[RMDB]
RNA sequence: GGGAACGACUCGAGUAGAGUCGAAAAGUAGGUGUACUGCAUGCUGCCAAAGUCAGGCAUGGACACACUAGUUACUUCUUUGGCCACUGUCAGCUUAAUCUUAUGAUUAGAAGUCAAAUCAUAGGUCCCCAGGACCUCACUUCGGUGAGGUCCUGGGAAAAGAAACAACAACAACAAC
Reactivity to 2A3 in 0.01 (KOAc 150mM, MgCl2 10mM, bicine 150mM(pH8.5), 24C), signal-to-noise 2, nucleotides 027 to 126: g030u040a010g180g000u020g040u010a160c090u170g000c000a000u000g000c000u010g010c050c100a220a130a090g160u300c080a010g000g100c040a000u030g000g000a010c020a010c000a000c120u050a000g070u150u000a050c000u060u120c020u110u130u020g050g000c000c000a050c030u160g140u100c010a000g060c050u100u270a130a000u070c000u000u030a000u040g000a030u000u090a060g030a260a010g090u120c110a000a000a100u020c000a010u000a090g000g000u000c000